[RMDB]
An RNA of 177 nucleotides, treated with 2A3 and DMS and read out base by base.
The data come from the RNA Mapping Database (RMDB), libraries RFM100 and RFMREP.
For DMS the reverse transcriptase was MarathonRT.
Reactivities are given for positions 27 through 126.
The RNA was probed in 150 mM KOAc, 10 mM MgCl2 and 150 mM bicine (pH 8.5) at 24 C.
2A3 adducts were read by reverse transcription with SuperScript II with manganese.
RNA sequence: GGGAACGACUCGAGUAGAGUCGAAAAAUGUCCGAAUGGGGAAACCCAGCCACAGUGAUGUGUGGUUACCCGCGCCUGAAUAUAUAGGGCGUGUGGAGGGAACGUGGGGAAGUGAAACAUCUCAGUAACUAGGGCUAAUAUUCGUAUUAGCCCUAGUAAAAGAAACAACAACAACAAC
Reactivity to 2A3 in 0.01 (KOAc 150mM, MgCl2 10mM, bicine 150mM(pH8.5), 24C), signal-to-noise 4, nucleotides 027 to 126: a010u090g080u030c030c010g040a050a110u080g000g000g000g010a010a040a060c000c000c000a030g020c010c000a030c020a030g060u050g070a080u030g030u000g010u010g050g000u010u060a060c010c000c000g000c000g010c000c000u030g040a150a020u150a030u090a040u110a250g000g000g000c010g000u020g020u080g010g010a030g000g000g000a080a060c040g020u110g000g010g000g010a050a070g070u100g130a070a090a010c010a060u030c030u000c050a050g050u040a020
Reactivity to DMS in 0.01 (KOAc 150mM, MgCl2 10mM, bicine 150mM(pH8.5), 24C), signal-to-noise 9, nucleotides 027 to 126: a080u030g010u020c040c040g010a090a080u010g010g000g010g000a130a090a130c010c000c010a090g000c020c010a010c010a060g000u020g010a060u020g000u000g010u000g000g000u000u020a090c020c010c010g000c020g010c010c000u000g000a120a130u020a130u050a050u010a210g000g000g000c010g020u000g000u040g010g000a180g000g000g000a100a050c090g010u010g000g000g010g000a070a070g000u000g000a080a090a100c140a070u010c050u010c060a110g010u020a090
Reactivities are rounded to 0.1 and cut off at 0 and 3.